[RMDB]
Description
Structure probing data (DMS and 2A3) for a 170-nucleotide construct. For 2A3, 7,087 sequencing reads were counted. For DMS, 13,602 sequencing reads were counted.
RNA sequence: GGGAACGACUCGAGUAGAGUCGAAAAGAGGAGAGGCGAAGAUAGCAGCGGAGACCCCGGUCCGAAUGCCCGUCGGCAGCAAACUCCUCUGGAGUCCUUCGGAUCCAAAGGAGAAAACUACCGGCGGUUACGAGUGGCUUCGGCCACUCGAAAAGAAACAACAACAACAAC
Reactivity to DMS in 0.01 (KOAc 150mM, MgCl2 10mM, bicine 150mM(pH8.5), 24C), signal-to-noise 5, nucleotides 027 to 129: g070a060g080g020a060g010a040g000g060c100g030a080a030g020a100u000a060g020c130a010g020c160g020g000a120g030a100c100c060c060c070g000g030u040c100c040g030a050a030u050g000c180c030c000g070u010c000g000g030c030a020g020c170a020a060a140c000u010c030c000u020c100u000g010g030a020g000u050c020c030u060u040c170g040g020a160u000c020c010a000a030a050g060g010a000g020a010a020a200a140c010u000a060c020c020g010g000c000g050g000u000u000a080
Reactivity to 2A3 in 0.01 (KOAc 150mM, MgCl2 10mM, bicine 150mM(pH8.5), 24C), signal-to-noise 1, nucleotides 027 to 129: g070a030g000g030a020g000a010g010g010c030g000a020a000g010a030u140a030g040c030a000g040c040g030g010a030g020a060c030c000c020c010g010g020u010c000c010g060a130a090u180g040c000c000c000g000u000c000g020g000c020a020g000c010a040a030a040c020u000c000c000u000c010u000g000g030a050g170u070c010c000u170u170c150g010g000a000u000c000c000a000a010a000g020g000a010g000a050a170a010a010c000u000a000c000c010g000g000c000g000g000u000u000a000
Source: RMDB library 15KLIB, as collected in RNAgym. The RNA was probed in 150 mM KOAc, 10 mM MgCl2 and 150 mM bicine (pH 8.5) at 24 C. DMS adducts were read by reverse transcription with MarathonRT.